RNA sequence: GGGAACGACUCGAGUAGAGUCGAAAAUGAACGCCGAGAUGUUGUGGAGGACAGCGAGGCCGCACCGGCGUCAAGAAACUGACGUACCUCGGCCGAAAGAACGUUUGCGUGGGGGCUGCCCAGUGCCACCAUCAGCAUCCUUCGGGAUGCUGAUGGUAAAAGAAACAACAACAACAAC
Reactivity to 2A3 in 0.01 (KOAc 150mM, MgCl2 10mM, bicine 150mM(pH8.5), 24C), signal-to-noise 1, nucleotides 027 to 126: u140g030a030a000c070g000c060c020g030a020g030a210u130g020u130u000g000u070g080g030a040g000g040a080c100a040g050c040g050a060g070g000c000c000g030c000a000c000c060g020g010c010g020u000c000a000a040g130a080a240a060c070u070g010a000c000g000u000a080c000c020u000c000g010g000c000c060g000a010a050a000g040a000a160c150g020u040u020u160g000c020g010u040g000g030g020g000g000c040u080g020c000c060c000a030g010u080g050c030c000
Reactivity to DMS in 0.01 (KOAc 150mM, MgCl2 10mM, bicine 150mM(pH8.5), 24C), signal-to-noise 2, nucleotides 027 to 126: u020g000a070a060c050g020c000c040g030a030g000a100u000g000u030u040g030u040g000g000a130g000g010a100c150a100g000c190g000a190g020g000c030c040g000c190a060c080c240g000g010c000g020u000c000a030a030g000a110a070a140c090u000g020a030c060g020u010a080c100c040u000c020g010g050c030c020g010a050a060a000g000a030a060c110g000u000u010u020g000c030g030u010g000g010g000g010g010c010u010g000c070c040c060a080g020u040g020c040c100